[RMDB]
RNA sequence: GGGAACGACUCGAGUAGAGUCGAAAAGUGUUGGUUCUCCCGCAACGCUACUCUGUUUACCAGGUCAGGUCCGGAAGGAAGCAGCCAAGGCAGAUGACGCGUGUGCCGGGAUGUAGCUGGCAGGGCAGCGCUGUAACUUUUUCGAAAGUUACAGCGCAAAAGAAACAACAACAACAAC
Reactivity to DMS in 0.01 (KOAc 150mM, MgCl2 10mM, bicine 150mM(pH8.5), 24C), signal-to-noise 1, nucleotides 027 to 126: g000u030g000u000u000g010g000u000u020c020u010c000c040c000g070c020a080a000c040g000c000u000a280c250u010c000u000g000u000u010u070a060c230c160a150g000g000u000c000a260g020g000u000c030c000g000g030a060a300g060g000a040a000g000c060a160g000c000c010a100a140g020g000c020a020g000a010u050g030a250c210g010c000g010u000g000u000g010c060c020g010g000g000a040u000g000u080a110g000c000u000g020g020c050a020g030g000g020c000a240
Reactivity to 2A3 in 0.01 (KOAc 150mM, MgCl2 10mM, bicine 150mM(pH8.5), 24C), signal-to-noise 3, nucleotides 027 to 126: g040u030g010u050u010g010g000u010u000c010u000c000c000c000g000c000a000a000c010g010c000u010a010c040u020c000u000g060u020u050u120a230c130c140a070g020g050u120c000a000g000g010u000c000c000g040g070a090a060g050g000a000a010g010c000a000g010c000c030a040a030g020g000c000a000g000a030u010g020a010c070g040c030g010u120g180u040g040c120c050g010g000g000a030u030g000u030a010g000c020u020g040g070c030a050g020g030g040c060a050